Notes
An RNA of 207 nucleotides, treated with 2A3 and DMS and read out base by base. Source: RMDB library OK3TST, as collected in RNAgym. The RNA was probed in 150 mM KOAc, 10 mM MgCl2 and 150 mM bicine (pH 8.5) at 24 C. For DMS the reverse transcriptase was MarathonRT. 2A3 adducts were read by reverse transcription with SuperScript II with manganese.
[RMDB]
RNA sequence: GGGAACGACUCGAGUAGAGUCGAAAACGAUCUGUUCGCAGAUCGAGCUACGGAGACGUAGCAAAGGCAGCGAGGAGCUGGACGCUGCCCCUACCGGAAAUGUAAGCUUAUCCACGAGUGCUAGGAUAAGCCCAGCUCCAGAGAAACAGCACUCGAAUACUCAGACAAUAUUCGUAUUGUCUGAGUAAAAAGAAACAACAACAACAAC
Reactivity to 2A3 in 0.01 (KOAc 150mM, MgCl2 10mM, bicine 150mM(pH8.5), 24C), signal-to-noise 2, nucleotides 027 to 156: c010g000a000u000c000u000g010u060u070c180g000c030a000g000a010u000c000g000a030g020c000u000a010c000g020g020a040g010a040c010g000u000a000g000c020a010a040a030g000g000c000a000g000c010g020a020g010g010a000g000c000u000g000g030a010c030g000c000u000g000c000c020c000c000u030a050c010c020g070g080a050a030a020u150g030u200a150a070g000c000u000u000a010u000c000c000a000c040g010a000g000u000g000c000u030a010g000g010a000u000a010a000g000c000c000c000a000g020c000u000c000c000a010g060a000g000a000a080a000c020a020g000c000a000c000u000c000g010a020a030
Reactivity to DMS in 0.01 (KOAc 150mM, MgCl2 10mM, bicine 150mM(pH8.5), 24C), signal-to-noise 2, nucleotides 027 to 156: c020g010a010u000c020u020g000u010u010c300g000c050a050g100a010u000c010g010a110g040c010u000a030c040g000g010a300g000a300c030g020u000a010g000c020a050a030a040g000g000c000a050g010c000g020a170g000g040a040g000c010u000g040g020a090c000g030c000u000g040c000c000c010c040u010a240c060c020g000g000a010a100a110u010g000u000a090a060g000c000u000u000a020u000c000c000a080c010g020a080g070u000g000c000u010a200g010g000a010u000a000a020g000c020c010c020a060g000c050u020c010c110a150g000a140g010a120a100a050c050a040g000c010a040c000u010c000g010a150a260